Chemical mapping of a 177-nucleotide RNA with 2A3 and DMS. The DMS profile rests on 783 reads. The RNA was probed in 150 mM KOAc, 10 mM MgCl2 and 150 mM bicine (pH 8.5) at 24 C.
RNA sequence: GGGAACGACUCGAGUAGAGUCGAAAAUCUUGUAUGCACAUACCUUCUUCCAGUGUUUGACUCACCUUUACGUUCUCUUAAUGAUGCCUUGUAAUGAACAAAGGUUCUUCAAAGCUGGAGGCAUCACCUGUGCGUUACACUUCGGUGUAACGCACAGAAAAGAAACAACAACAACAAC
Reactivity to 2A3 in 0.01 (KOAc 150mM, MgCl2 10mM, bicine 150mM(pH8.5), 24C), signal-to-noise 1, nucleotides 027 to 126: u000c000u030u120g080u130a070u110g080c060a000c000a050u160a060c020c040u030u080c000u020u030c030c020a040g010u000g160u100u040u010g020a010c000u010c030a000c000c000u050u110u060a060c020g030u030u000c080u000c030u050u130a250a250u220g030a010u080g040c020c020u000u000g050u060a120a150u140g000a020a010c000a000a250a060g190g000u030u020c000u000u000c000a080a050a000g050c050u110g050g000a010g010g000c020a020u040c010a020c000
Reactivity to DMS in 0.01 (KOAc 150mM, MgCl2 10mM, bicine 150mM(pH8.5), 24C), signal-to-noise 1, nucleotides 027 to 126: u010c020u040u020g020u000a070u010g000c040a080c070a040u000a110c040c050u000u020c040u000u000c030c010a110g000u000g010u010u000u030g010a030c050u000c050a130c100c010u000u000u000a160c120g010u000u000c000u000c160u050u000a110a060u000g010a000u000g020c110c050u010u000g010u010a150a150u000g020a010a000c040a080a070a100g000g020u000u000c040u020u000c040a070a080a190g010c110u000g010g030a000g010g000c040a010u000c020a050c230